[RMDB]
RNA sequence: GGGAACGACUCGAGUAGAGUCGAAAAUUAUCGCCACUCUGUUUUGCUUACUGCGGAUUAAAGAUGUUUAAGGCGCGGUCAGCAUUUCCAGAUCGAUAAGCCAGGUCAUGGCCUGCUGACGCGAGUAAAAUCCAUCGAGUUUCGACUCGAUGGAUUUAAAAGAAACAACAACAACAAC
Reactivity to 2A3 in 0.01 (KOAc 150mM, MgCl2 10mM, bicine 150mM(pH8.5), 24C), signal-to-noise 1, nucleotides 027 to 126: u040u030a010u050c030g000c040c010a070c000u030c030u020g000u000u060u060u060g000c000u000u020a010c010u010g010c030g040g040a030u000u030a050a010a030g240a210u170g160u140u120u050a070a060g090g090c000g020c020g020g030u000c000a000g000c020a000u000u030u010c040c010a010g010a010u080c020g060a080u070a080a070g010c070c000a020g010g030u040c020a080u180g120g000c080c000u020g000c030u060g020a010c030g010c040g000a000g010u060a020
Reactivity to DMS in 0.01 (KOAc 150mM, MgCl2 10mM, bicine 150mM(pH8.5), 24C), signal-to-noise 3, nucleotides 027 to 126: u010u010a030u000c020g010c240c090a120c190u000c030u000g000u000u010u000u010g020c010u000u000a030c020u010g020c000g000g000a080u000u000a020a030a060g000a200u000g000u000u000u000a020a050g000g000c020g020c010g000g010u000c030a040g000c000a020u000u000u010c250c040a020g000a050u010c020g000a060u000a040a050g030c110c050a070g010g000u020c070a110u000g020g010c240c150u000g010c090u010g010a070c100g020c060g000a050g000u000a070